[RMDB]
Chemical mapping of a 207-nucleotide RNA with 2A3. Reactivities are given for positions 27 through 156.
RNA sequence: GGGAACGACUCGAGUAGAGUCGAAAACGCUGGGUUCGGCCACAAGACUCGAUAAGUCCUGAAGCGCGCACGGGACUUUUGACGAGUCAAAGUGGGCGAACCUGUGCUGAAGCGCGCACGGCAACCGAAAGGUGCGAAACUCCGGUUUCGACCGGAGGUGCCCUGGAUAGUUCGCUAUCCAGGGCACAAAAGAAACAACAACAACAAC
Reactivity to 2A3 in 0.01 (KOAc 150mM, MgCl2 10mM, bicine 150mM(pH8.5), 24C), signal-to-noise 2, nucleotides 027 to 156: c060g020c030u120g010g000g020u000u000c000g100g170c060c000a070c060a130a220g000a020c000u010c020g050a100u010a210a000g000u000c000c000u020g020a190a060g000c010g030c000g020c010a030c030g010g000g000a000c000u050u020u080u130g120a060c020g010a000g010u010c010a010a030a000g020u000g000g030g020c000g000a000a000c000c000u010g000u000g000c030u060g050a160a020g000c040g000c000g000c000a030c060g090g020c050a120a120c000c000g060a090a020a040g000g010u010g000c010g000a040a020a040c010u000c000c010g010g040u080u170u140c160g050a030c000c020g010g010a000g000